Chemical mapping of a 177-nucleotide RNA with 2A3 and DMS. The RNA was probed in 150 mM KOAc, 10 mM MgCl2 and 150 mM bicine (pH 8.5) at 24 C. For 2A3 the reverse transcriptase was SuperScript II with manganese. DMS adducts were read by reverse transcription with MarathonRT. Values cover nucleotides 27 to 126.

RNA sequence: GGGAACGACUCGAGUAGAGUCGAAAAGCGGUCGGCUCCAGUCGCUCGCGGAAUUCGUCGCGGUCGAAGUCGCCUUUGGACCCUUUGCCGGAGCCGAUGUCAUCGACCAUCAACGCCAGGCCGUGGCAGCCCUCAUGGUAUUCGUACCAUGAGGGCUAAAAGAAACAACAACAACAAC
Reactivity to 2A3 in 0.01 (KOAc 150mM, MgCl2 10mM, bicine 150mM(pH8.5), 24C), signal-to-noise 1, nucleotides 027 to 126: g090c070g030g030u030c000g030g000c020u020c020c020a040g080u030c040g020c030u030c050g040c040g040g170a090a280u300u200c150g120u100c000g050c020g060g000u020c020g010a020a000g030u080c000g110c070c000u060u100u040g080g060a050c000c000c000u040u160u140g000c000c020g000g020a000g000c050c010g000a000u060g080u020c030a110u050c000g050a050c020c030a050u110c060a080a090c050g000c000c030a050g040g080c070c070g060u080g000g010c010
Reactivity to DMS in 0.01 (KOAc 150mM, MgCl2 10mM, bicine 150mM(pH8.5), 24C), signal-to-noise 2, nucleotides 027 to 126: g010c040g020g030u000c000g020g030c000u000c010c030a080g010u010c000g010c040u000c030g020c030g030g020a100a170u000u010c150g010u010c020g000c050g010g000u000c010g040a110a170g010u000c070g030c110c050u000u000u010g010g010a050c060c050c060u010u010u020g000c040c060g000g000a060g010c020c000g000a030u010g000u010c060a120u000c060g010a110c060c020a090u020c130a090a090c130g010c050c030a090g020g000c130c000g010u000g030g020c060